Structure probing data (DMS and 2A3) for a 177-nucleotide construct. DMS adducts were read by reverse transcription with MarathonRT. Conditions: 150 mM KOAc, 10 mM MgCl2 and 150 mM bicine (pH 8.5), 24 C. 2A3 adducts were read by reverse transcription with SuperScript II with manganese. Values cover nucleotides 27 to 126. The 2A3 profile rests on 17,580 reads.
RNA sequence: GGGAACGACUCGAGUAGAGUCGAAAAUGUAGUCCCAGCUACUCGGGAAGCUGAGGCAGGAGAAUGGCGUGAACCCAGGAGGCGGAGCUUGUAGUGAGAUGGAGAUCGCCCACUGCACACCAGCCUGCUACGUACUUUAGUUCGCUAAAGUACGUAGAAAAGAAACAACAACAACAAC
Reactivity to DMS in 0.01 (KOAc 150mM, MgCl2 10mM, bicine 150mM(pH8.5), 24C), signal-to-noise 9, nucleotides 027 to 126: u010g010u000a100g010u000c010c010c010a160g000c040u000a040c040u000c080g010g000g010a110a090g010c050u000g020a080g010g020c030a060g000g000a100g010a090a080u000g010g010c060g010u000g010a120a120c090c080c040a090g010g000a130g000g010c040g010g010a090g010c090u000u000g010u000a050g010u000g010a060g000a080u000g010g010a080g010a090u000c060g010c040c020c030a070c040u000g000c030a040c100a140c040c030a070g010c020c020u000g000
Reactivity to 2A3 in 0.01 (KOAc 150mM, MgCl2 10mM, bicine 150mM(pH8.5), 24C), signal-to-noise 7, nucleotides 027 to 126: u150g020u040a030g070u030c000c010c000a000g020c020u060a050c010u020c070g050g020g040a070a020g000c030u020g030a040g050g010c020a010g010g080a060g030a130a180u110g030g000c030g020u040g030a050a060c000c030c010a030g050g040a030g020g010c040g010g020a050g040c050u070u080g040u070a080g030u030g100a120g010a100u090g050g040a080g010a060u100c040g040c000c020c000a020c010u020g000c010a020c000a010c030c010a010g040c000c000u020g000